[RMDB]
RNA sequence: GGGAACGACUCGAGUAGAGUCGAAAAACCAUGCGCGAAACGCUGGCGCGGCUCAUCAAGGAGUUCUCCGCGUGGUGUUCGACAGACUGGGCACGCAUCGUGUACCUCGGCACACCGCAGAGUACAGAGAGCAUCUACAACGCUCUACCGCAGCAAGCCUCUGCAUCGUUUUCGAACGAUGCAGAGGAAAAGAAACAACAACAACAAC
Reactivity to 2A3 in 0.01 (KOAc 150mM, MgCl2 10mM, bicine 150mM(pH8.5), 24C), signal-to-noise 1, nucleotides 027 to 156: a000c010c000a040u230g010c010g010c000g150a130a160a000c010g010c020u020g060g000c010g000c000g020g060c000u040c050a110u010c040a030a020g050g000a020g050u030u140c050u010c040c000g000c010g000u010g000g000u040g000u130u130c010g040a090c210a140g040a000c070u140g000g040g000c020a010c030g030c070a270u300c150g010u010g020u080a160c000c000u050c000g010g040c000a000c000a050c000c000g000c020a000g000a000g050u080a010c050a020g040a000g000a000g180c000a030u140c050u090a070c110a190a000c140g000c030u000c000u080a150c030c030g010c070a090g050c000a110a000g020

Background
The record gives the reactivity of an RNA of 207 nucleotides to 2A3. Conditions: 150 mM KOAc, 10 mM MgCl2 and 150 mM bicine (pH 8.5), 24 C.